[RMDB]
RNA sequence: GGGAACGACUCGAGUAGAGUCGAAAAGAUAUGGAGGCCUGACAUGCUUACGCGAGCUUCGGAAACGAAGCUCAAGCAACAGCAGGCUCCUAAGUCAAACGUAGCAUAACUUCGGUUAUGCUACGAACAAAUUAAUUGCGUUCGCGCAAUUAAUUUGAAAAGAAACAACAACAACAAC
Reactivity to 2A3 in 0.01 (KOAc 150mM, MgCl2 10mM, bicine 150mM(pH8.5), 24C), signal-to-noise 3, nucleotides 027 to 126: g030a020u040a060u170g000g000a040g080g300c010c000u050g040a140c020a190u100g050c030u190u160a070c170g040c080g150a000g010c000u010u010c010g010g000a050a030a030c010g010a000a010g000c010u000c000a000a020g000c000a000a100c030a050g040c000a010g000g000c000u000c000c010u020a130a020g040u020c020a110a060a040c030g000u010a000g000c000a010u010a000a010c010u050u090c300g070g000u000u000a010u000g000c000u010a000c000g000a000a000
Reactivity to DMS in 0.01 (KOAc 150mM, MgCl2 10mM, bicine 150mM(pH8.5), 24C), signal-to-noise 5, nucleotides 027 to 126: g000a030u000a300u010g000g000a010g020g010c000c000u000g000a090c070a150u000g010c080u000u010a100c210g030c300g000a020g000c000u000u000c000g000g010a080a080a180c010g000a000a000g010c000u000c000a020a100g010c020a030a040c140a070g000c000a000g000g000c010u000c000c000u000a030a150g000u000c020a080a080a260c020g000u000a010g010c000a000u000a000a000c000u000u010c180g010g000u000u000a000u000g000c010u000a000c000g000a070a130